[RMDB]
RNA sequence: GGGAACGACUCGAGUAGAGUCGAAAAGAUAUGGAAUGUUAGGACAUGCCUAGUCGGAAACGACCAGGCAACAGCCUGGGCAUUCCUAAGUCAAACAAACGGGAACUGUUCGCAGUUCCCGUUUGAACUACGUCAGUGAGUUCGCUCACUGACGUAGAAAAGAAACAACAACAACAAC
Reactivity to DMS in 0.01 (KOAc 150mM, MgCl2 10mM, bicine 150mM(pH8.5), 24C), signal-to-noise 2, nucleotides 027 to 126: g000a020u000a240u010g000g000a020a010u000g000u000u000a060g010g010a050c140a200u000g010c000c000u000a010g010u020c000g030g020a030a050a160c000g000a020c000c000a000g010g010c000a010a010c250a110g020c000c000u010g020g010g000c000a000u000u000c000c000u000a050a080g010u010c030a110a170a230c000a010a000a020c000g000g000g010a010a000c000u000g010u010u020c240g010c030a010g010u000u000c000c000c000g000u000u000u010g010a040a270